An RNA of 207 nucleotides, treated with DMS and 2A3 and read out base by base.
Reactivities are given for positions 27 through 156.
The RNA was probed in 150 mM KOAc, 10 mM MgCl2 and 150 mM bicine (pH 8.5) at 24 C.
For DMS, 1,850 sequencing reads were counted.
It was measured as part of the RMDB library OK3TST.
RNA sequence: GGGAACGACUCGAGUAGAGUCGAAAAAUAUUAGCUCUGCUGGUUCAGCUCUUACGAUUGCUAUUGAAAAACUCGAAAAGGAGGGGCUUAUCUAAUGAGUAAACCAUUCGAGGCAAGGGUAAGAAUUAUUGGCACUUGUGUUUACGGAAAUGUAAUGGCUAUUAAUCGAUUUCGAUCGAUUAAUAGCAAAAGAAACAACAACAACAAC
Reactivity to DMS in 0.01 (KOAc 150mM, MgCl2 10mM, bicine 150mM(pH8.5), 24C), signal-to-noise 1, nucleotides 027 to 156: a150u000a050u000u000a040g040c050u020c030u010g020c030u000g020g030u020u000c050a090g020c050u000c030u000u000a090c070g000a110u000u020g000c030u010a130u000u010g000a110a040a130a050a140c000u000c030g000a050a090a050a100g030g040a050g000g020g010g070c030u030u000a040u010c050u010a090a170u000g030a190g030u000a080a030a070c030c020a240u000u010c090g040a130g000g010c030a050a060g000g000g020u000a050a000g000a090a030u000u000a060u000u000g020g010c030a040c000u010u000g010u010g010u010u000u000a110c060g000g000a040a090a070u010g010u000a100a070u030g030
Reactivity to 2A3 in 0.01 (KOAc 150mM, MgCl2 10mM, bicine 150mM(pH8.5), 24C), signal-to-noise 2, nucleotides 027 to 156: a000u140a030u060u100a000g020c020u040c010u080g000c020u020g030g000u060u090c030a030g000c010u000c020u050u060a030c050g090a060u000u030g050c020u080a110u150u150g050a120a060a040a140a030c010u010c010g070a040a080a070a060g080g050a060g010g010g000g000c030u030u020a040u000c050u060a030a110u110g000a000g020u040a040a170a000c010c000a060u050u030c020g010a000g020g020c020a030a000g110g000g000u060a080a000g020a050a060u200u130a010u070u060g010g000c010a010c040u010u040g010u000g020u030u010u090a050c070g050g120a110a040a030u100g020u170a000a080u150g080